[RMDB]
Conditions: 150 mM KOAc, 10 mM MgCl2 and 150 mM bicine (pH 8.5), 24 C. An RNA of 207 nucleotides, treated with 2A3 and read out base by base. Reactivities are rounded to 0.1 and cut off at 0 and 3. It was measured as part of the RMDB library OK3TST.
RNA sequence: GGGAACGACUCGAGUAGAGUCGAAAAAGUGACAUCUUUUCGGUUACUUUUGUCAGUCAACAGUUCAAGUGCAGUUAGUCCGUGAAAGUGUGUUUAAAGUGAGAUAUAUAUUGUAGCCGAAAAGGUAGGGGAGGUGCUAGGGCGGGACCCGGUGAGCGAUUGGAGAUUGGUUCGCCAAUCUCCAAUCAAAAGAAACAACAACAACAAC
Reactivity to 2A3 in 0.01 (KOAc 150mM, MgCl2 10mM, bicine 150mM(pH8.5), 24C), signal-to-noise 2, nucleotides 027 to 156: a000g210u110g040a030c010a010u000c000u050u020u020u000c030g010g000u030u020a000c030u010u000u010u160g100u020c050a040g040u070c020a050a010c000a050g020u100u050c070a140a000g070u040g030c020a020g010u030u160a020g030u090c060c070g020u020g110a060a070a070g040u050g010u010g010u010u090u240a090a120a020g020u030g030a080g010a040u030a000u000a000u020a060u210u090g020u000a000g000c000c000g000a000a000a000a010g000g000u020a020g020g030g000g000a180g070g010u290g030c100u200a010g040g000g030c040g000g010g020a010c050c000c000g000g030u060g020a040g120c100